[RMDB]
RNA sequence: GGGAACGACUCGAGUAGAGUCGAAAAUUGUAUAACCAUUAGAAAUUUGAGGGUCAUUUCUCAAUUCAUCUUGGGGAAUUUCUUCAUUAGUAAUAUAAUCUGCAUAGUUCGCUGGGUCUAAGUAAGGAAUUAAUACUAUGUUCGCAUAGUAUUAAUUAAAAGAAACAACAACAACAAC
Reactivity to DMS in 0.01 (KOAc 150mM, MgCl2 10mM, bicine 150mM(pH8.5), 24C), signal-to-noise 3, nucleotides 027 to 126: u020u020g010u010a060u000a080a170c040c060a120u000u040a100g000a140a150a110u010u010u010g000a030g000g010g020u000c130a030u020u020u010c000u000c000a010a010u020u030c190a070u050c240u010u010g000g000g020g000a020a030u000u010u020c010u010u000c030a020u000u010a060g000u010a070a040u010a060u030a040a050u020c050u020g000c050a050u010a050g000u010u010c030g010c010u000g010g000g000u000c060u010a040a070g010u010a050a100g000g020
Reactivity to 2A3 in 0.01 (KOAc 150mM, MgCl2 10mM, bicine 150mM(pH8.5), 24C), signal-to-noise 4, nucleotides 027 to 126: u080u050g080u080a140u030a130a050c030c000a040u080u170a090g080a090a160a090u100u080u090g030a050g020g010g070u050c050a020u040u070u000c000u000c000a020a020u130u210c030a090u070c140u010u000g000g000g020g040a010a000u110u040u000c000u000u020c020a050u040u060a020g060u080a130a150u110a070u020a140a140u030c040u080g030c020a040u060a120g040u050u080c070g000c040u060g080g040g050u060c050u040a080a030g070u000a090a040g100g020